RNA sequence: GGGAACGACUCGAGUAGAGUCGAAAAUGUUGCCUAAAAGGCUAGCCUCAUGCUGGUUGUGCUAACUUGGCUCCCUACAGGCAGGGAGUACUGAAGGGCAAGAGGCUAUGUACUGCCAGCUAGAUUCACAGUUUCAGAGAUUCGUCUCUGAAACUGUAAAAGAAACAACAACAACAAC
Reactivity to 2A3 in 0.01 (KOAc 150mM, MgCl2 10mM, bicine 150mM(pH8.5), 24C), signal-to-noise 2, nucleotides 027 to 126: u140g070u030u160g000c000c010u110a160a140a030a040g030g000c000u020a010g010c010c010u060c030a050u130g000c000u000g020g020u030u020g030u020g030c030u040a070a090c010u030u020g030g000c010u110c010c010c000u010a050c060a120g100g090c010a010g200g030g010a040g000u060a080c000u030g030a030a020g080g000g000c050a060a010g030a000g120g000c050u050a030u060g030u010a030c000u040g010c000c000a020g000c010u090a060g020a230u160u160c070
Reactivity to DMS in 0.01 (KOAc 150mM, MgCl2 10mM, bicine 150mM(pH8.5), 24C), signal-to-noise 4, nucleotides 027 to 126: u010g000u000u010g020c010c010u000a070a080a140a150g010g010c010u000a070g010c030c010u000c050a110u000g030c010u000g010g000u000u010g010u000g010c040u010a070a110c030u000u000g010g010c090u000c000c000c010u000a130c110a070g000g030c120a120g010g000g000a080g020u000a020c010u010g000a140a050g000g000g010c120a070a140g020a090g000g010c050u000a010u000g030u000a040c040u000g000c010c010a020g000c010u000a150g000a120u000u000c120